[RMDB]
Structure probing data (DMS and 2A3) for a 177-nucleotide construct. Source: RMDB library M2PK50, as collected in RNAgym. The RNA was probed in 150 mM KOAc, 10 mM MgCl2 and 150 mM bicine (pH 8.5) at 24 C.
RNA sequence: GGGAACGACUCGAGUAGAGUCGAAAACGAUUAGCAUUCGUGCUAAUCGAAUCAGGUUGUACCUAUCUCUAUUACCUGUAGUGGCCAACGUCCGGACAGAGAAUCGAGUCCUGUUCGCAGGACUCAACGACUAGGGAGGAUUCGUCCUCCCUAGUCGAAAAGAAACAACAACAACAAC
Reactivity to DMS in 0.01 (KOAc 150mM, MgCl2 10mM, bicine 150mM(pH8.5), 24C), signal-to-noise 2, nucleotides 027 to 126: c000g000a000u000u000a000g000c000a040u000u010c140g060u010g000c010u000a000a010u000c010g010a070a080u000c080a040g010g000u000u000g010u000a120c060c040u010a050u010c010u020c040u000a030u000u000a060c050c030u000g010u000a080g030u000g020g030c050c040a070a130c170g000u010c010c010g030g010a090c090a050g000a090g000a100a110u000c120g010a010g000u000c000c000u000g000u000u000c210g010c000a020g010g000a040c010u010c010a040a080
Reactivity to 2A3 in 0.01 (KOAc 150mM, MgCl2 10mM, bicine 150mM(pH8.5), 24C), signal-to-noise 1, nucleotides 027 to 126: c010g010a000u020u000a000g040c010a030u010u030c120g090u050g000c000u010a000a010u020c020g000a000a070u090c020a000g040g050u060u110g070u180a110c010c010u020a050u050c040u020c020u030a070u120u090a110c000c000u090g040u050a090g100u080g040g020c000c080a120a090c090g060u030c040c050g050g040a020c050a020g160a020g050a100a120u210c070g000a010g030u000c010c010u000g020u030u060c190g000c030a000g000g010a000c000u020c000a030a000
DMS adducts were read by reverse transcription with MarathonRT. The 2A3 profile rests on 1,207 reads.